[RMDB]
The data come from the RNA Mapping Database (RMDB), library OK1LIB. Chemical mapping of a 177-nucleotide RNA with 2A3. 2A3 adducts were read by reverse transcription with SuperScript II with manganese.

RNA sequence: GGGAACGACUCGAGUAGAGUCGAAAAUUGGUGCCGGCCGCGGGCUCGGUGACGACGUUUCUGCUGGCGUGGGAGCUGAUGGCGAUCGCGUCGCUGAUCCUGGUGCUCUCCGAGCACGCCCGCCCGCUGGUUGGGCCAGGUUCGCCUGGCCCAACCAAAAAGAAACAACAACAACAAC
Reactivity to 2A3 in 0.01 (KOAc 150mM, MgCl2 10mM, bicine 150mM(pH8.5), 24C), signal-to-noise 1, nucleotides 027 to 126: u000u080g070g010u100g210c090c070g020g030c040c090g000c010g000g010g080c040u060c010g000g010u010g000a040c040g050a000c080g030u020u030u030c030u070g080c080u210g000g000c030g000u030g000g000g000a020g040c020u260g050a150u300g220g000c020g000a010u010c000g000c010g010u000c000g000c000u000g010a000u070c000c020u130g020g000u070g050c040u020c000u020c020c070g010a000g060c000a000c000g000c000c000c000g000c000c000c000g080c020
Reactivities are rounded to 0.1 and cut off at 0 and 3.